Source information
This 207-nucleotide RNA was probed chemically with DMS and 2A3. 2A3 is a SHAPE reagent: it acylates the 2'-hydroxyl of flexible nucleotides of all four kinds. For 2A3 the reverse transcriptase was SuperScript II with manganese. It was measured as part of the RMDB library OK3TST. The DMS profile rests on 2,866 reads.
[RMDB]
RNA sequence: GGGAACGACUCGAGUAGAGUCGAAAAAAAGGAGCACUCACAGAGCCGUUGCACCUUUAAAGAAUUGCCCAUUUUCGAUACCUGGCAUAUCACUUGAAUAGAAGAAGUUUAACAGAAUUAACAGUCUGUGUCUGGAUGCAAGAUGGUUUUAACCUAAGAUUAGGUCCCUAUUCGUAGGGACCUAAUCAAAAGAAACAACAACAACAAC
Reactivity to DMS in 0.01 (KOAc 150mM, MgCl2 10mM, bicine 150mM(pH8.5), 24C), signal-to-noise 2, nucleotides 027 to 156: a070a020a110g040g000a170g030c020a000c100u000c040a100c030a120g010a070g060c010c050g030u000u000g030c030a160c040c030u000u000u000a060a060a140g000a130a140u000u000g000c010c000c050a120u010u000u030u010c040g010a140u000a070c040c090u000g030g020c020a100u000a060u000c050a040c030u030u000g010a070a120u000a090g030a070a090g000a100a080g020u000u000u000a060a130c040a060g020a080a240u010u000a110a150c080a110g010u000c000u000g030u010g010u000c010u000g010g000a070u010g000c050a050a070g020a090u000g000g020u000u000u000u000a050a090c040c020u000a090a210
Reactivity to 2A3 in 0.01 (KOAc 150mM, MgCl2 10mM, bicine 150mM(pH8.5), 24C), signal-to-noise 2, nucleotides 027 to 156: a000a000a000g060g000a040g000c030a030c000u060c030a110c080a130g110a020g110c110c030g000u060u060g010c020a130c010c000u030u050u060a090a080a010g100a060a040u080u100g050c010c010c010a070u110u070u000u060c030g030a020u080a170c000c010u030g030g000c040a040u060a020u060c030a040c010u030u090g030a090a090u080a130g020a040a010g000a000a020g030u010u020u230a100a030c030a000g140a130a020u150u110a100a030c010a030g060u000c020u040g040u010g000u030c010u040g010g010a000u020g040c020a010a040g000a130u090g030g000u000u100u200u240a030a050c010c020u030a030a090